Conditions: 150 mM KOAc, 10 mM MgCl2 and 150 mM bicine (pH 8.5), 24 C. This 177-nucleotide RNA was probed chemically with 2A3 and DMS. For 2A3 the reverse transcriptase was SuperScript II with manganese.
RNA sequence: GGGAACGACUCGAGUAGAGUCGAAAAGCGGCCGGUACGAUAGCGCGGCCGUCGGCCGAUCCGGCCUGGAUCUGGAUCACGAUGCGCGAUCUAGGUACCUCGAUCGUACGGCGCUGUACGAUAGGCCGGCUAUGGUGAUUUUCGAAUCACCAUAGCCAAAAGAAACAACAACAACAAC
Reactivity to 2A3 in 0.01 (KOAc 150mM, MgCl2 10mM, bicine 150mM(pH8.5), 24C), signal-to-noise 3, nucleotides 027 to 126: g050c030g000g020c020c020g070g050u080a010c030g080a280u030a060g070c090g020c010g020g060c040c010g000u000c020g000g020c040c060g020a060u000c010c030g100g010c040c070u060g020g000a040u030c030u050g000g010a040u030c040a010c110g100a090u220g100c050g000c020g050a010u030c010u030a020g040g030u210a300c000c010u050c060g100a070u020c020g010u020a030c020g030g100c110g050c150u090g020u000a000c030g000a020u020a050g000g000c030c020
Reactivity to DMS in 0.01 (KOAc 150mM, MgCl2 10mM, bicine 150mM(pH8.5), 24C), signal-to-noise 2, nucleotides 027 to 126: g000c020g020g030c000c010g020g010u010a040c030g000a100u000a050g000c040g000c020g010g030c120c020g030u000c030g010g000c090c040g000a050u010c020c050g020g010c090c070u010g010g010a040u010c000u010g000g000a020u000c040a040c040g020a120u000g030c020g030c030g000a010u000c020u000a020g000g010u000a040c020c040u010c230g020a040u000c000g000u000a040c020g020g040c170g030c090u000g010u000a010c000g010a050u010a040g010g010c000c000

Reactivities are given for positions 27 through 126. DMS adducts were read by reverse transcription with MarathonRT.